Conditions: 150 mM KOAc, 10 mM MgCl2 and 150 mM bicine (pH 8.5), 24 C. Structure probing data (2A3) for a 207-nucleotide construct. Values cover nucleotides 27 to 156. For 2A3, 821 sequencing reads were counted. Source: RMDB library OK3TST, as collected in RNAgym.
[RMDB]
RNA sequence: GGGAACGACUCGAGUAGAGUCGAAAAUCGCGAUGCCGGAAACCGGGGCGUUUCAUGUGUAUGCGUCCCGCUAUCUCAGCCCGGCUACAGGUUAUACCGUGGCGUGGCUGUAUUGGCUGACGUGGACGGUUGCACUGGGCUCUAGCCUGACCGCCGCGACCUCAUUGGAGUUCGCUCCAAUGAGGUCAAAAGAAACAACAACAACAAC
Reactivity to 2A3 in 0.01 (KOAc 150mM, MgCl2 10mM, bicine 150mM(pH8.5), 24C), signal-to-noise 2, nucleotides 027 to 156: u090c000g000c050g040a020u110g020c070c050g090g030a060a020a050c030c010g010g080g010g010c020g020u050u130u110c110a170u250g240u110g060u190a050u130g040c020g010u030c000c040c010g000c020u030a040u000c090u020c040a020g010c020c000c000g070g000c010u000a010c010a090g000g040u090u080a110u150a170c020c010g000u020g000g000c010g020u040g000g000c000u030g040u210a190u120u300g020g000c040u040g030a040c010g000u060g070g000a000c010g000g060u000u090g010c080a040c150u120g000g000g050c000u060c030u160a020g050c010c000u030g040a030c040c060g020c000c020g040c040